Structure probing data (DMS and 2A3) for a 177-nucleotide construct. Values cover nucleotides 27 to 126.
[RMDB]
RNA sequence: GGGAACGACUCGAGUAGAGUCGAAAAAGCAUCAUGCCCAUAAUGCUAUGUGUGAUAUCUGUACACAGAGAUGGAGUAUGGAGCAAUCUACCUCUCACACAGGCCGAAGUUGAUGAGCUGGUGUUUAAGUCACGUUGAGAUUCGUCUCAACGUGACUAAAAGAAACAACAACAACAAC
Reactivity to DMS in 0.01 (KOAc 150mM, MgCl2 10mM, bicine 150mM(pH8.5), 24C), signal-to-noise 1, nucleotides 027 to 126: a000g020c030a000u000c030a000u010g050c040c010c030a050u000a050a090u000g000c020u000a010u000g000u000g010u020g030a040u050a010u000c050u000g010u000a030c050a080c010a030g000a090g000a090u000g040g000a140g000u000a060u000g050g000a000g000c220a080a020u000c070u010a030c140c030u000c030u030c000a040c000a010c000a050g000g020c010c210g000a090a070g000u000u000g000a070u010g000a020g050c010u030g000g040u000g030u000u000u010a040
Reactivity to 2A3 in 0.01 (KOAc 150mM, MgCl2 10mM, bicine 150mM(pH8.5), 24C), signal-to-noise 4, nucleotides 027 to 126: a000g020c020a010u030c010a050u300g000c000c000c010a000u110a040a060u150g000c040u130a180u290g060u010g020u000g040a030u030a040u150c020u020g030u120a060c180a020c000a030g030a010g020a100u110g050g040a170g100u070a130u170g020g000a060g060c020a020a000u050c010u080a090c030c010u040c000u000c010a010c000a000c010a000g030g010c010c020g140a150a040g100u180u240g040a090u000g010a020g020c000u000g000g030u000g010u010u040u050a110